[RMDB]
RNA sequence: GGGAACGACUCGAGUAGAGUCGAAAAGAUAUGGAUCAGCGGGAGUGCUAACCGGAUCGGAAACGAUCCGUCGCACGAAGAACGCUGAGUCCUAAGUCAAACACAGCCCCGUUCGCGGGGCUGUGAACCCUGUGUUUAUGUUCGCAUAAACACAGGGAAAAGAAACAACAACAACAAC
Reactivity to DMS in 0.01 (KOAc 150mM, MgCl2 10mM, bicine 150mM(pH8.5), 24C), signal-to-noise 2, nucleotides 027 to 126: g000a020u000a270u010g000g000a220u000c020a010g000c000g020g000g000a080g030u000g000c010u020a100a290c300c050g000g020a000u000c010g000g000a070a050a110c000g010a000u000c000c010g030u000c120g010c020a010c000g030a090a110g020a090a160c030g000c000u010g000a030g040u010c000c000u000a050a100g000u000c010a130a060a220c000a020c000a000g010c000c010c020c020g000u000u010c240g050c030g000g000g010g000c000u050g000u000g000a030a130
Description: The record gives the reactivity of an RNA of 177 nucleotides to DMS. Reactivities are given for positions 27 through 126. For DMS the reverse transcriptase was MarathonRT. The RNA was probed in 150 mM KOAc, 10 mM MgCl2 and 150 mM bicine (pH 8.5) at 24 C.